[RMDB]
The record gives the reactivity of an RNA of 177 nucleotides to DMS and 2A3. The data come from the RNA Mapping Database (RMDB), library OK2TRN. For DMS the reverse transcriptase was MarathonRT.
RNA sequence: GGGAACGACUCGAGUAGAGUCGAAAAACACGAGUCAGCUAAGACUUGUGCGUGUACCGAUACUGCAAUCGGUGCAGGGUCUAGUCUUAGGUGACUGGACGAACAAGUGAUUGCAGUAUCACUUGAAGCACUCGAAUCUAUUCGUAGAUUCGAGUGCAAAAGAAACAACAACAACAAC
Reactivity to DMS in 0.01 (KOAc 150mM, MgCl2 10mM, bicine 150mM(pH8.5), 24C), signal-to-noise 2, nucleotides 027 to 126: a040c010a060c040g020a010g020u000c000a150g030c220u020a140a100g000a000c000u010u000g000u010g020c030g020u010g000u020a090c030c040g000a010u000a040c030u010g010c100a060a010u000c000g000g000u020g010c070a050g060g000g000u000c000u000a040g000u000c000u000u000a070g010g040u000g020a010c000u000g000g000a030c100g010a190a050c010a070a060g010u000g010a020u000u010g030c090a060g000u000a010u000c000a060c070u000u000g020a110a150
Reactivity to 2A3 in 0.01 (KOAc 150mM, MgCl2 10mM, bicine 150mM(pH8.5), 24C), signal-to-noise 2, nucleotides 027 to 126: a000c050a000c000g000a000g010u030c010a000g010c240u200a170a030g000a000c000u010u020g000u070g020c050g090u040g020u020a030c010c040g000a000u000a050c030u070g060c040a000a020u010c030g300g000u110g010c120a080g200g000g040u000c000u020a000g010u000c000u060u110a170g000g160u110g000a000c000u000g000g000a010c000g020a250a040c050a130a010g240u040g130a010u000u050g000c040a000g010u060a010u000c010a020c050u030u050g090a110a010